[RMDB]
Conditions: 150 mM KOAc, 10 mM MgCl2 and 150 mM bicine (pH 8.5), 24 C. Structure probing data (2A3) for a 207-nucleotide construct. The data come from the RNA Mapping Database (RMDB), library M2RFPK. Reactivities are rounded to 0.1 and cut off at 0 and 3.
RNA sequence: GGGAACGACUCGAGUAGAGUCGAAAAAGAUCGAUUACGAUCGAUCAAUGAUGCCCCUCACCCACCUCUGAAGAUCCCAGGUGGGCGAGGGAACGGAGCACGGGAUCAGGAGCAGUACGCUGCUCGAAAAAGAACUAGACCUUCGGGUCUAGUUCAAUCUUCAUUCACUCUUCGGAGUGAAUGAAGAAAAAGAAACAACAACAACAAC
Reactivity to 2A3 in 0.01 (KOAc 150mM, MgCl2 10mM, bicine 150mM(pH8.5), 24C), signal-to-noise 2, nucleotides 027 to 156: a000g000a000u000c000g020a000u030u180a100c170g020a060u020c000g010a000u020c020a010a090u170g110a080u230g120c000c000c000c000u000c000a020c000c010c000a000c010c000u040c030u130g100a110a040g000a050u010c000c000c000a010g000g020u020g000g000g020c000g000a000g000g000g010a010a070c090g060g080a070g040c110a050c230g000g010g000a010u000c010a020g080g000a000g000c000a000g030u070a020c270g050c090u000g000c000u020c000g000a000a000a030a000a030g000a000a000c000u000a000g000a000c000c010u030u120c300g110g000g000u000c000u000a000g010u000u000c000a000a000